Source: RMDB library OK3TST, as collected in RNAgym. The record gives the reactivity of an RNA of 207 nucleotides to DMS and 2A3. The 2A3 profile rests on 1,178 reads. Values cover nucleotides 27 to 156. The reactions ran in a buffer of 150 mM KOAc, 10 mM MgCl2 and 150 mM bicine (pH 8.5), at 24 C.
[RMDB]
RNA sequence: GGGAACGACUCGAGUAGAGUCGAAAAGAUAAUAAACAAAGGGUGUAAGACCAGGCUUGAACUUUGCAAAAUUUAGACUUCAAGCAUAGGAUGAGGAGCAAAGGACAUAAAUGGAGUGGGAGGAAAGACAAGAGAUUGUAGUGUCACAAAAGCUAAAGUACUAUGCGUUUUUCGAAACGCAUAGUACAAAAGAAACAACAACAACAAC
Reactivity to DMS in 0.01 (KOAc 150mM, MgCl2 10mM, bicine 150mM(pH8.5), 24C), signal-to-noise 1, nucleotides 027 to 156: g000a150u000a150a180u000a210a120a030c000a070a170a110g000g000g030u000g050u000a110a100g000a150c050c040a100g020g000c000u000u000g000a100a120c050u000u000u040g010c100a080a120a090a220u010u000u000a090g000a130c080u000u020c000a020a070g010c010a140u000a080g020g010a140u010g010a020g000g040a120g030c070a080a070a070g020g010a010c090a040u000a050a190a140u000g030g020a080g050u040g010g000g040a120g000g010a080a020a100g000a110c030a110a120g010a110g020a070u000u000g230u000a050g020u000g000u000c010a080c060a040a040a210a100g040c040u010a010a040a190
Reactivity to 2A3 in 0.01 (KOAc 150mM, MgCl2 10mM, bicine 150mM(pH8.5), 24C), signal-to-noise 2, nucleotides 027 to 156: g000a030u110a100a050u070a070a130a020c110a100a060a010g040g000g000u020g030u080a030a020g030a030c030c020a000g040g020c010u000u040g010a010a080c020u080u070u190g090c110a080a110a090a120u070u140u070a030g000a030c070u070u020c030a020a000g010c030a030u090a050g020g010a000u050g030a050g000g020a020g000c070a060a070a000g040g010a020c020a030u140a060a100a010u110g010g000a020g040u070g020g020g010a020g000g000a100a000a000g020a020c020a040a000g020a000g010a050u000u100g000u030a060g000u030g030u050c030a010c060a080a110a000a010g010c040u050a150a000a050